[RMDB]
RNA sequence: GGGAACGACUCGAGUAGAGUCGAAAAUCAGGAUCGUUAGUCGCGUUGUUGUCAGUAAAAAUAACUACACGUUUGGCUUUUCUUGAACGAAGUUGAUGAUCAAUUGAUGCGCGAUCUUGAAAUUCACCAUGGAGGAUCCAUUCGUGGAUCCUCCAUGAAAAGAAACAACAACAACAAC
Reactivity to DMS in 0.01 (KOAc 150mM, MgCl2 10mM, bicine 150mM(pH8.5), 24C), signal-to-noise 3, nucleotides 027 to 126: u000c000a020g000g000a000u000c010g040u010u000a210g040u090c020g030c090g010u010u000g010u000u000g010u000c050a050g030u050a000a070a070a130a040u040a050a020c050u000a120c300a160c060g000u000u000u030g020g040c290u020u020u000u020c020u030u000g010a030a090c040g020a120a020g000u000u000g000a100u010g000a020u050c100a010a070u010u060g030a020u000g030c120g030c020g000a020u000c000u000u000g000a000a070a050u000u000c050a100c070
Reactivity to 2A3 in 0.01 (KOAc 150mM, MgCl2 10mM, bicine 150mM(pH8.5), 24C), signal-to-noise 7, nucleotides 027 to 126: u000c000a000g010g010a000u000c010g030u110u130a120g070u160c020g000c040g070u050u060g020u020u020g030u050c040a030g180u280a010a070a040a050a090u250a050a020c020u100a060c070a010c060g020u010u030u050g110g020c070u080u120u140u050c090u100u210g020a030a020c040g020a100a040g040u040u030g060a120u020g010a050u130c020a020a040u080u230g030a030u040g020c020g000c010g000a000u000c000u000u000g010a030a010a030u070u040c050a070c130